[RMDB]
RNA sequence: GGGAACGACUCGAGUAGAGUCGAAAACAGCGCCACCCCCAGACUGCCGCUCCUCCUGUCGGGACCCCCUGAGGCUUUCUCCACCCGGAGUGCGGGGUAGGGAGCAGACGGAGAGUGACGGAGGGUGCCAGUCUCCUUAUUUCGAUAAGGAGACUGGAAAAGAAACAACAACAACAAC
Reactivity to 2A3 in 0.01 (KOAc 150mM, MgCl2 10mM, bicine 150mM(pH8.5), 24C), signal-to-noise 5, nucleotides 027 to 126: c030a020g070c030g020c040c010a040c000c000c000c010c000a010g030a110c070u100g030c020c020g010c020u030c020c010u000c000c010u080g020u050c030g010g090g150a140c020c000c000c000c030u030g070a070g170g000c000u060u070u010c010u020c020c020a260c050c010c030g010g060a140g060u160g100c030g000g000g010g000u030a070g020g000g010a010g030c000a010g020a010c020g020g000a040g010a020g040u070g010a050c080g010g010a050g010g020g010u010g030
Reactivity to DMS in 0.01 (KOAc 150mM, MgCl2 10mM, bicine 150mM(pH8.5), 24C), signal-to-noise 2, nucleotides 027 to 126: c070a190g010c080g020c020c040a100c020c030c000c030c020a020g000a110c080u000g000c030c020g020c040u010c000c010u020c010c000u060g010u010c020g000g040g000a140c050c010c010c020c020u000g010a260g000g000c070u000u000u000c040u000c090c050a150c000c080c020g050g020a110g000u050g010c020g000g000g030g000u000a070g010g030g010a080g020c030a060g010a160c130g000g000a090g000a110g010u030g040a190c020g000g000a080g000g010g010u010g010

The record gives the reactivity of an RNA of 177 nucleotides to 2A3 and DMS. It was measured as part of the RMDB library OK1LIB.